[RMDB]
RNA sequence: GGGAACGACUCGAGUAGAGUCGAAAAAAAGGCUUAUCAAGCGAGGUGGAGGGACUGGCCCGAUGAAACCCGACAGCCAGAAAUGGUGCCAAUUCCUGCAGCGGAAACGUUGAAAGAUGAGCCGAAACAGUAAUGACUUGUUCGCAAGUCAUUACUGAAAAGAAACAACAACAACAAC
Reactivity to DMS in 0.01 (KOAc 150mM, MgCl2 10mM, bicine 150mM(pH8.5), 24C), signal-to-noise 2, nucleotides 027 to 126: a100a050a130g000g000c000u000u000a010u010c000a200a120g000c050g050a130g010g010u010g000g000a050g010g020g000a140c110u000g020g010c000c060c020g000a090u010g000a010a190a090c030c000c020g000a100c190a060g000c020c040a050g000a090a070a070u010g010g020u000g010c010c000a060a110u000u010c000c010u000g000c020a060g000c040g000g000a070a060a090c010g030u000u000g010a120a070a060g010a010u000g000a010g000c010c000g010a120a040a110
Reactivity to 2A3 in 0.01 (KOAc 150mM, MgCl2 10mM, bicine 150mM(pH8.5), 24C), signal-to-noise 1, nucleotides 027 to 126: a000a000a000g030g000c000u010u010a030u020c010a050a000g000c000g030a110g000g040u010g010g100a020g000g000g000a020c010u010g030g000c000c010c040g020a110u010g040a020a060a030c020c010c020g040a030c080a010g020c030c010a010g030a010a050a000u090g000g000u070g050c020c030a020a030u050u010c020c000u050g070c000a000g040c010g000g030a060a020a010c000g010u020u080g030a080a050a010g010a000u010g010a000g000c000c010g010a040a000a010